[RMDB]
RNA sequence: GGGAACGACUCGAGUAGAGUCGAAAAAAGGCGGUUCCGCCUGCCGCGACCAUCCAUGGCCGCAGCGCAAAAUGGCUGAUUUUCCUGCCCCGCGCGAUGAUAACGGCAGGUGGCUUUUUGCGCUUCAAGCAUUUAAAUCCUUCGGGAUUUAAAUGCUAAAAGAAACAACAACAACAAC
Reactivity to DMS in 0.01 (KOAc 150mM, MgCl2 10mM, bicine 150mM(pH8.5), 24C), signal-to-noise 2, nucleotides 027 to 126: a060a020g000g020c010g020g000u000u000c120c040g020c030c020u000g000c060c010g020c060g020a080c090c020a030u000c120c130a090u010g000g030c040c050g020c060a030g020c030g010c040a010a000a010a020u020g020g000c040u000g000a170u000u000u000u000c000c000u000g010c000c030c060c070g010c080g010c110g030a080u020g020a120u020a060a060c150g000g000c010a010g000g010u010g000g000c010u000u000u000u000u000g010c040g010c020u000u000c140a110
Reactivity to 2A3 in 0.01 (KOAc 150mM, MgCl2 10mM, bicine 150mM(pH8.5), 24C), signal-to-noise 1, nucleotides 027 to 126: a000a000g070g000c000g020g020u150u070c110c010g030c000c010u010g000c000c020g030c000g020a000c000c020a030u060c010c030a150u130g000g010c000c040g010c050a000g010c020g030c020a020a030a000a070u120g090g000c040u050g130a150u140u050u070u010c000c000u010g000c000c000c000c040g050c020g020c070g080a160u130g020a030u090a100a020c030g010g000c000a000g000g000u040g020g000c010u020u030u020u000u030g020c020g000c010u020u040c040a010